[RMDB]
RNA sequence: GGGAACGACUCGAGUAGAGUCGAAAAGAUAUGGAUUCGCUUUCGAGGAUCCGUAACAUCAGUCGGAAACGACUGUGGGGGAGAAAGGCGAAUCCUAAGUCAAAACUGGCAACUUCGGUUGCCAGAACAAGAUGAUAAUGUUCGCAUUAUCAUCUUGAAAAGAAACAACAACAACAAC
Reactivity to 2A3 in 0.01 (KOAc 150mM, MgCl2 10mM, bicine 150mM(pH8.5), 24C), signal-to-noise 7, nucleotides 027 to 126: g020a020u060a030u120g000g000a000u000u010c010g000c020u030u020u030c080g090a280g120g050a100u050c020c020g000u080a060a050c030a180u300c020a010g000u000c000g000g020a070a050a070c000g010a000c010u000g000u030g010g040g010g000g000a120g050a040a040a020g180g030c000g000a000a010u000c000c000u010a060a000g020u010c020a010a020a110a180c000u000g000g000c000a010a010c010u050u100c300g150g000u000u000g000c030c000a000g000a000a010
Reactivity to DMS in 0.01 (KOAc 150mM, MgCl2 10mM, bicine 150mM(pH8.5), 24C), signal-to-noise 8, nucleotides 027 to 126: g010a040u000a290u000g000g000a010u010u000c000g010c010u000u000u000c030g020a130g020g010a060u010c010c010g010u000a050a150c130a060u010c010a010g010u010c000g010g000a100a100a180c010g020a010c000u000g020u000g020g000g010g000g010a080g000a030a020a040g010g010c000g000a020a010u000c000c000u000a010a100g010u000c030a090a060a130a170c000u000g000g010c000a000a010c000u000u020c200g020g010u000u000g000c010c000a000g000a050a130